Overview: Structure probing data (DMS and 2A3) for a 177-nucleotide construct. For 2A3, 8,984 sequencing reads were counted.
[RMDB]
RNA sequence: GGGAACGACUCGAGUAGAGUCGAAAACAUACGGACUUCGGUCCGUAUGAAAGAACCUCAAAUUGACGCAAACUUCGGCGUCAUCGCGAGGAAGCGAGGAAAAAAUCGAGGUGUUCGCACCUCGAAACAAAUCUCUACAGUUCGCUGUAGAGAUUUGAAAAGAAACAACAACAACAAC
Reactivity to DMS in 0.01 (KOAc 150mM, MgCl2 10mM, bicine 150mM(pH8.5), 24C), signal-to-noise 6, nucleotides 027 to 126: c000a010u000a000c010g000g000a030c000u010u010c190g030g020u000c000c010g010u000a000u000g000a050a080a090g000a120a110c000c010u000c020a040a260a070u020u000g010a030c000g000c000a050a100a130c280u000u010c250g020g010c000g000u000c000a010u000c100g010c300g000a030g010g010a070a110g000c130g010a100g000g010a000a040a090a060a100a090u000c010g010a010g020g010u000g000u010u000c170g020c000a020c010c000u010c000g000a000a030a110
Reactivity to 2A3 in 0.01 (KOAc 150mM, MgCl2 10mM, bicine 150mM(pH8.5), 24C), signal-to-noise 6, nucleotides 027 to 126: c000a000u010a000c010g010g010a010c010u040u070c220g070g010u000c000c000g010u000a000u000g000a000a010a000g040a040a070c000c000u010c010a060a060a060u050u050g010a000c010g000c010a050a200a300c200u220u190c200g120g000c000g010u000c000a010u000c010g000c030g000a030g040g080a030a010g070c060g040a110g090g020a130a110a060a020a000a050u040c010g000a000g000g010u020g020u030u060c210g020c040a010c000c010u010c000g000a000a000a000
The DMS profile rests on 6,510 reads.